[RMDB]
RNA sequence: GGGAACGACUCGAGUAGAGUCGAAAAGCCUCCUCGCUUCCAUAGAAAGGGGACGGGGCAGAUCGCAAGUGCGACAACCGAGCGGUGGUAUCUGUCAAACUAAGCAGCCACUGCACAUCAAUUGACUAAACGAUGCCGAUCUUCGGAUCGGCAUCAAGCAUAAUUUAAGCUUCGGCUUAAAUUAUGCAAAAGAAACAACAACAACAAC
Reactivity to 2A3 in 0.01 (KOAc 150mM, MgCl2 10mM, bicine 150mM(pH8.5), 24C), signal-to-noise 4, nucleotides 027 to 156: g010c000c010u000c000c000u010c020g050c050u070u000c030c010a130u070a270g190a110a150a040g040g000g000g000a010c010g000g000g000g000c040a010g020a120u020c010g000c050a140a150g050u120g160c000g030a040c040a110a060c070c100g090a020g050c000g000g000u010g000g020u050a090u100c000u020g090u120c050a100a070a100c140u130a120a100g010c000a000g000c000c000a010c000u020g060c030a030c010a070u200c090a110a210u130u240g080a130c060u180a100a040a040c100g000a000u000g000c000c000g000a000u010c020u030u010c150g060g010a000u000c000g010g020c000a000u000c000a000a000
Reactivity to DMS in 0.01 (KOAc 150mM, MgCl2 10mM, bicine 150mM(pH8.5), 24C), signal-to-noise 1, nucleotides 027 to 156: g000c010c000u000c010c020u000c010g000c060u010u010c040c070a050u030a120g020a110a140a270g000g030g000g020a000c040g020g000g090g000c090a010g000a150u000c000g000c010a140a190g020u000g000c020g000a050c030a220a210c030c010g000a080g030c040g040g020u010g030g020u000a080u000c090u000g030u000c050a200a100a210c210u030a090a140g020c010a060g000c020c020a020c000u000g000c040a150c120a090u000c080a070a110u010u000g030a130c100u000a070a150a200c160g010a030u000g000c000c000g010a000u000c030u000u000c190g030g020a010u000c000g030g000c010a000u000c000a000a090
An RNA of 207 nucleotides, treated with 2A3 and DMS and read out base by base.
2A3 adducts were read by reverse transcription with SuperScript II with manganese.
The RNA was probed in 150 mM KOAc, 10 mM MgCl2 and 150 mM bicine (pH 8.5) at 24 C.
Reactivities are rounded to 0.1 and cut off at 0 and 3.
The 2A3 profile rests on 2,284 reads.